The record gives the reactivity of an RNA of 177 nucleotides to DMS. The data come from the RNA Mapping Database (RMDB), library OK2TST. The RNA was probed in 150 mM KOAc, 10 mM MgCl2 and 150 mM bicine (pH 8.5) at 24 C.
RNA sequence: GGGAACGACUCGAGUAGAGUCGAAAAUCCCAGACAUAUUGCGAUACACGGCAGAAAGGAUGAAGUUGACGUCCGGCGCAAAGAAGCGUAUCAUUUGGCUUGCAUCAGAGUCGUGGGAUAGAAACAAUAUCAGGUGCUCAUUCGUGAGCACCUGAUAAAAAGAAACAACAACAACAAC
Reactivity to DMS in 0.01 (KOAc 150mM, MgCl2 10mM, bicine 150mM(pH8.5), 24C), signal-to-noise 1, nucleotides 027 to 126: u000c000c000c040a120g000a280c240a110u000a130u000u000g000c000g040a070u020a010c040a100c060g010g020c010a120g000a170a220a160g000g000a030u000g000a030a060g000u000u000g000a090c300g050u000c140c150g010g000c000g000c000a000a090a090g030a200a060g000c000g010u000a030u000c070a100u000u010u000g000g010c020u000u000g010c060a030u000c020a080g000a170g030u010c000g020u000g010g020g010a120u000a160g010a080a130a040c120a050a050